[RMDB]
Notes:
The record gives the reactivity of an RNA of 207 nucleotides to 2A3 and DMS. Reactivities are given for positions 27 through 156. It was measured as part of the RMDB library M2RFPK. The RNA was probed in 150 mM KOAc, 10 mM MgCl2 and 150 mM bicine (pH 8.5) at 24 C.
RNA sequence: GGGAACGACUCGAGUAGAGUCGAAAAGAAAGUUCAUGCAAGCUAGCCGGCAAAAAAGCAAACUUGACCACCAAGGAUAAAAGAGAUCUUAUCCAAGGAUGCAAAAGAUAAUCUCACUUUUGACACCAAAACAGGGAGUAGUUCGCUACUCCCUGAACUCUUAAGGUUGGUUCGCCAACCUUAAGAGAAAAGAAACAACAACAACAAC
Reactivity to 2A3 in 0.01 (KOAc 150mM, MgCl2 10mM, bicine 150mM(pH8.5), 24C), signal-to-noise 2, nucleotides 027 to 156: g040a010a020a000g000u030u050c050a010u040g000c000a020a070g020c010u060a020g040c030c050g050g010c060a070a120a030a000a020a000g040c020a060a040a030c010u020u030g020a040c000c010a010c010c020a090a030g020g000a000u010a010a050a010a020g100a000g020a010u040c000u010u030a000u000c010c010a010a030g030g000a040u040g010c010a000a000a000a000g030a030u110a100a080u110c060u030c040a030c010u000u030u010u070g120a130c080a070c050c060a040a070a100a090c000a010g030g000g010a000g000u000a000g010u040u040c110g020c080u000a000c000u000c040c000c000u010g000a000a000
Reactivity to DMS in 0.01 (KOAc 150mM, MgCl2 10mM, bicine 150mM(pH8.5), 24C), signal-to-noise 2, nucleotides 027 to 156: g000a080a040a080g020u010u030c030a140u000g010c000a070a130g010c050u000a300g020c020c020g000g030c060a000a050a110a160a160a020g000c020a060a060a070c010u020u000g000a130c070c010a130c020c020a080a300g010g010a090u010a010a000a010a050g010a230g010a160u000c030u000u000a020u000c000c000a010a190g010g000a070u000g020c020a020a050a040a040g020a090u000a050a040u000c020u000c020a190c040u010u000u000u010g000a140c010a050c010c020a020a070a010a100c010a000g000g020g000a060g040u000a020g010u000u030c250g020c030u000a010c010u000c000c000c000u010g000a000a050